RNA sequence: GGGAACGACUCGAGUAGAGUCGAAAAACAUACUUUGGCCGACGUCAUACCAUUGAAGACGAAUCGUUAAAGACACCAGCUCGUCUUAUAGGAGCCCAUUUAGCAAAAACAGUCCUGUAGGAACCAACUUCUCUGUAAUCUUCGGAUUACAGAGAAGAAAAGAAACAACAACAACAAC
Reactivity to 2A3 in 0.01 (KOAc 150mM, MgCl2 10mM, bicine 150mM(pH8.5), 24C), signal-to-noise 2, nucleotides 027 to 126: a000c050a080u260a110c020u050u070u050g060g000c050c030g050a040c030g040u040c020a060u090a250c020c040a090u050u190g060a090a010g020a020c010g020a020a070u070c030g010u010u090a070a090a000g060a020c030a030c060c010a010g030c040u060c050g110u020c010u040u070a070u060a070g090g000a030g000c030c000c010a030u090u100u060a050g020c030a000a130a030a030a090c010a030g090u000c000c010u030g040u080a020g000g060a010a020c030c000a020a040
Reactivity to DMS in 0.01 (KOAc 150mM, MgCl2 10mM, bicine 150mM(pH8.5), 24C), signal-to-noise 2, nucleotides 027 to 126: a070c060a090u040a080c080u000u010u000g010g010c010c030g020a120c050g000u000c040a090u000a080c090c060a090u010u020g030a140a100g020a050c010g010a040a060u000c130g000u010u000a030a060a070g000a100c070a080c080c050a090g020c080u000c060g030u010c010u020u000a060u000a060g000g010a090g030c040c020c000a060u010u000u010a070g010c100a050a060a060a070a010c110a070g020u000c020c040u010g010u000a080g000g020a050a100c100c070a050a100
Chemical mapping of a 177-nucleotide RNA with 2A3 and DMS.
The RNA was probed in 150 mM KOAc, 10 mM MgCl2 and 150 mM bicine (pH 8.5) at 24 C.
It was measured as part of the RMDB library M2PK90.
The 2A3 profile rests on 1,912 reads.